[RMDB]
An RNA of 207 nucleotides, treated with 2A3 and DMS and read out base by base. For DMS, 4,428 sequencing reads were counted. The RNA was probed in 150 mM KOAc, 10 mM MgCl2 and 150 mM bicine (pH 8.5) at 24 C. It was measured as part of the RMDB library OK3TST.
RNA sequence: GGGAACGACUCGAGUAGAGUCGAAAAGAAAGAAAGAAAGAGACUGCACUCAUGGAAGUGAGUCUCAUGGGAAGCUAUGUCUUAGCUGAAAGCCUGUCUUCAAAGUCCUUUGGCAAGGAAGUUUUCUGUUAUGAAUAAAUUAGUAUCACAAGUAAAACAUACGUAUGGUGUUCGCACCAUACGUAUGAAAAGAAACAACAACAACAAC
Reactivity to 2A3 in 0.01 (KOAc 150mM, MgCl2 10mM, bicine 150mM(pH8.5), 24C), signal-to-noise 3, nucleotides 027 to 156: g070a030a070a000g040a050a040a020g040a050a140a010g000a000g010a000c060u150g090c160a000c000u010c020a150u270g080g010a080a010g000u010g010a010g000u000c000u000c000a040u060g010g020g020a050a040g000c030u030a010u130g080u070c020u040u070a020g010c010u000g040a030a010a000g000c000c020u050g060u030c040u050u050c060a080a050a100g040u080c000c000u080u070u030g020g000c020a010a020g000g000a020a040g010u010u020u010u060c040u030g060u100u090a080u140g040a050a060u160a100a120a050u150u090a040g030u060a070u170c060a030c030a140a030g150u220a060a220a010a000
Reactivity to DMS in 0.01 (KOAc 150mM, MgCl2 10mM, bicine 150mM(pH8.5), 24C), signal-to-noise 2, nucleotides 027 to 156: g020a130a060a080g000a110a090a110g000a050a150a220g000a060g010a050c010u010g000c020a060c000u000c040a140u000g010g010a120a030g000u000g000a040g000u000c020u000c020a050u000g040g000g000a090a110g020c020u000a050u010g020u000c060u000u000a100g020c010u020g000a060a050a130g010c050c030u000g000u000c060u020u000c040a110a090a140g000u000c040c020u000u000u000g020g000c100a100a080g010g000a020a090g020u000u000u010u000c020u000g020u010u000a050u020g030a110a120u010a040a060a110u010u000a140g020u000a090u000c030a090c040a070a140g010u000a070a110a120a160